[RMDB]
RNA sequence: GGGAACGACUCGAGUAGAGUCGAAAACACUUCGCGUGGUUCCGGGAACUCGAUUCACGCCGAUAGCUUUCUCGAAUCCCCACGGCAAGCGUCCGGCGAUGAAUUGACGCUGGUGGGGGGCGUGGACACUGCUAGCAUCUUUCGAGAUGCUAGCAGUAAAAGAAACAACAACAACAAC
Reactivity to 2A3 in 0.01 (KOAc 150mM, MgCl2 10mM, bicine 150mM(pH8.5), 24C), signal-to-noise 4, nucleotides 027 to 126: c050a010c020u020u070c070g040c050g010u070g010g030u040u130c040c010g050g050g010a060a050c040u080c080g120a230u050u010c020a000c060g030c030c020g040a120u070a220g050c070u060u160u060c080u020c030g070a130a140u150c000c000c000c000a020c020g190g000c120a080a070g010c000g000u000c020c090g060g040c100g060a040u090g090a070a190u060u090g000a000c000g000c020u070g000g000u010g000g030g000g000g000g010c010g010u000g000g020a020c030
Reactivity to DMS in 0.01 (KOAc 150mM, MgCl2 10mM, bicine 150mM(pH8.5), 24C), signal-to-noise 3, nucleotides 027 to 126: c080a060c020u020u040c110g030c070g020u030g000g000u000u020c030c030g040g000g000a150a080c120u040c090g010a180u000u000c000a010c020g000c010c010g010a080u040a070g010c090u000u020u010c010u010c020g010a130a150u070c000c000c000c000a020c000g010g080c150a110a020g020c010g000u000c030c090g000g000c150g030a100u020g000a040a090u050u000g000a030c020g020c010u000g000g030u010g000g000g000g000g000g000c020g020u000g010g010a060c160